[RMDB]
RNA sequence: GGGAACGACUCGAGUAGAGUCGAAAACAUGUUACUUAAAAAGGAGCCACUUCUCUAUGUGCCCAUCCGGCUGGCUGGACACACUAGACACCUCCCAGGUCCUCGUGUGUACCUGGUUGAGAGGCUCGAAGUGAUGUCUUCGGACAUCACAAAAGAAACAACAACAACAAC
Reactivity to DMS in 0.01 (KOAc 150mM, MgCl2 10mM, bicine 150mM(pH8.5), 24C), signal-to-noise 9, nucleotides 027 to 129: c050a080u020g000u000u020a000c080u020u030a040a080a070a170a090g020g000a010g030c030c010a150c140u040u030c120u030c020u020a050u010g030u000g020c040c010c010a000u000c020c000g050g000c250u050g020g040c090u000g010g010a010c000a000c010a030c200u030a000g030a020c300a100c190c010u020c020c010c010a050g030g010u000c040c030u040c300g020u070g030u000g040u010a010c010c010u000g010g020u050u060g000a030g010a100g040g020c040u020c010g040a060a060
Reactivity to 2A3 in 0.01 (KOAc 150mM, MgCl2 10mM, bicine 150mM(pH8.5), 24C), signal-to-noise 9, nucleotides 027 to 129: c040a020u130g070u160u170a140c050u160u220a080a050a030a030a050g180g000a000g010c010c010a060c050u230u080c020u010c000u040a010u030g010u010g000c000c010c000a020u000c010c040g300g040c300u260g020g000c000u000g000g000a000c000a010c000a010c080u010a010g010a010c040a050c060c010u000c010c000c000a000g000g000u030c020c030u090c090g190u190g040u040g000u140a010c000c000u000g000g000u100u170g040a070g010a050g010g010c000u000c000g010a110a010
The data come from the RNA Mapping Database (RMDB), library 15KLIB. The record gives the reactivity of an RNA of 170 nucleotides to DMS and 2A3. For DMS, 44,836 sequencing reads were counted.